[RMDB]
RNA sequence: GGGAACGACUCGAGUAGAGUCGAAAACGCUGGGAACGCACAGCAGAAGGGAGCUGAAGCGCGCACGGCGAAGAACUUCUGAACUACUGUGCCGGUUCCUGUGCUGAAGCGCGCACGGCAACCGAAAGGUGCGAAAAGUCCCAUGUUCGCAUGGGACGCCGAAGGCGUAGUUCGCUACGCCUUCGGCAAAAGAAACAACAACAACAAC
Reactivity to 2A3 in 0.01 (KOAc 150mM, MgCl2 10mM, bicine 150mM(pH8.5), 24C), signal-to-noise 2, nucleotides 027 to 156: c010g000c010u020g010g010g030a040a000c000g000c010a000c000a000g050c020a010g030a040a010g040g010g000a030g000c010u010g010a300a070g060c000g000c000g020c000a000c050g010g000c020g080a100a000g000a000a010c000u040u000c020u050g030a070a040c020u190a050c010u300g030u060g040c030c040g090g000u000u000c010c010u020g050u000g000c000u020g010a160a020g020c010g000c000g020c000a000c020g010g000c030a010a030c010c010g030a040a030a050g070g000u070g000c060g060a080a090a000a040g000u020c000c020c000a000u040g020u080u040c290g000c100a000u000g000g000g000a000c010

The record gives the reactivity of an RNA of 207 nucleotides to 2A3. Conditions: 150 mM KOAc, 10 mM MgCl2 and 150 mM bicine (pH 8.5), 24 C. The data come from the RNA Mapping Database (RMDB), library RNAMAK. 2A3 adducts were read by reverse transcription with SuperScript II with manganese. The 2A3 profile rests on 1,767 reads.